[RMDB]
RNA sequence: GGGAACGACUCGAGUAGAGUCGAAAAUAGAGCGUGUCAAGUUUGAGCUAGGGGUCAUUUCCAAAAAGGGUUAUAUCGACUACUUCCUUAUCGUGGCUGAUGCUAUCAAGUGGUGCAAGGAGCAGGGAAUCUUGAUCAACUUUGGUCGUGGCUCUGGCUUAUCACGGGGUUUCGACCCCGUGAUAAGAAAAGAAACAACAACAACAAC
Reactivity to DMS in 0.01 (KOAc 150mM, MgCl2 10mM, bicine 150mM(pH8.5), 24C), signal-to-noise 1, nucleotides 027 to 156: u000a050g000a040g010c010g040u010g000u000c040a080a130g000u000u000u000g000a070g000c070u000a100g020g020g060g040u010c020a110u000u020u000c000c000a060a050a080a110a150g020g010g010u010u020a080u000a090u000c030g010a080c020u010a070c050u000u000c020c060u000u000a060u000c040g040u030g010g040c020u000g020a050u010g030c050u010a070u000c030a060a140g050u000g000g040u010g020c060a030a050g040g010a140g020c030a100g020g010g000a040a070u000c060u010u000g000a080u000c000a020a080c080u000u010u000g020g000u000c040g010u000g000g000c010u000c050u010g010g030
Reactivity to 2A3 in 0.01 (KOAc 150mM, MgCl2 10mM, bicine 150mM(pH8.5), 24C), signal-to-noise 5, nucleotides 027 to 156: u150a010g050a010g030c050g020u040g050u080c080a100a070g010u010u060u170g040a030g000c030u070a040g010g020g020g020u020c040a040u080u050u080c020c030a040a010a010a030a040g070g010g000u090u040a120u020a030u150c040g040a020c020u060a060c010u120u100c040c000u090u080a120u150c090g020u070g030g000c040u050g020a050u070g020c030u020a030u180c020a060a050g000u030g060g020u010g030c010a030a040g020g010a020g040c030a020g030g000g020a020a050u030c020u040u070g010a060u070c020a010a110c050u080u050u070g010g020u030c040g010u020g020g010c000u000c000u000g050g010